[RMDB]
RNA sequence: GGGAACGACUCGAGUAGAGUCGAAAAUGGCGUUAGUGCGUGAAGAGACAAAAGUUUCUGUCACUUUGGCUCAACACCAACGUUUGGGCGGUCGCACAUCAGCUUUAUGGCGUCGUAUGCGCUCGGAAAAUAUGGUAACAUUCGUGUUACCAUAUUUAAAAGAAACAACAACAACAAC
Reactivity to DMS in 0.01 (KOAc 150mM, MgCl2 10mM, bicine 150mM(pH8.5), 24C), signal-to-noise 9, nucleotides 027 to 126: u010g010g010c010g010u000u000a070g020u000g010c060g030u000g010a050a060g010a060g010a020c010a040a060a100a160g010u000u010u010c100u000g010u000c060a080c010u000u000u000g020g010c020u000c030a050a100c050a050c060c080a050a070c160g010u000u000u000g010g010g010c010g010g010u000c020g010c040a030c030a060u000c080a110g010c090u000u010u010a120u010g010g010c020g010u000c130g010u010a060u000g000c050g010c020u000c080g010g000a110
Reactivity to 2A3 in 0.01 (KOAc 150mM, MgCl2 10mM, bicine 150mM(pH8.5), 24C), signal-to-noise 9, nucleotides 027 to 126: u090g010g000c020g010u030u070a080g020u070g060c030g020u040g030a030a010g030a000g010a020c010a020a280a040a110g030u050u100u100c090u070g120u050c010a010c010u050u040u070g080g000c000u000c010a010a010c030a030c060c070a090a050c070g020u040u060u060g010g010g000c000g020g030u050c010g010c010a040c000a060u070c040a030g030c020u080u150u090a150u180g030g000c010g010u060c030g020u080a070u200g060c020g000c010u030c020g050g000a080